Chemical mapping of a 177-nucleotide RNA with 2A3 and DMS.
It was measured as part of the RMDB library OK2TRN.
RNA sequence: GGGAACGACUCGAGUAGAGUCGAAAACAAUGUAUUGAUAGAUUUGGUUCUCAGUGUCGGGCGUUGCAAAGUCUGUCUCGUUGUAGAGCCAAGUGUCAUUCCACAUUAUCAAGAAUCUGUCGUGUGAAGCUCACUACGAAUUCGUUCGUAGUGAGCUAAAAGAAACAACAACAACAAC
Reactivity to 2A3 in 0.01 (KOAc 150mM, MgCl2 10mM, bicine 150mM(pH8.5), 24C), signal-to-noise 1, nucleotides 027 to 126: c060a030a060u170g010u080a120u060u180g010a030u000a150g200a130u040u010u070g000g000u000u000c010u010c010a040g010u000g010u000c020g000g000g000c080g070u130u210g060c120a170a110a010g010u000c010u080g040u020c050u010c060g090u020u040g080u140a010g000a000g090c000c000a000a000g030u030g040u010c040a000u060u030c120c010a070c020a090u030u090a170u180c040a100a010g060a090a080u090c100u100g160u120c060g030u070g050u080g180a040
Reactivity to DMS in 0.01 (KOAc 150mM, MgCl2 10mM, bicine 150mM(pH8.5), 24C), signal-to-noise 1, nucleotides 027 to 126: c110a040a030u000g000u010a060u000u010g010a040u020a070g010a070u000u020u010g010g000u010u000c010u000c030a070g010u000g010u000c040g000g020g000c030g040u010u000g040c280a120a080a140g010u000c020u000g010u000c020u000c000g030u000u020g010u000a030g010a000g000c020c000a020a040g010u020g000u010c040a090u010u010c100c130a040c050a070u000u010a070u010c120a040a170g000a060a120u000c050u010g010u000c070g010u000g020u000g010a080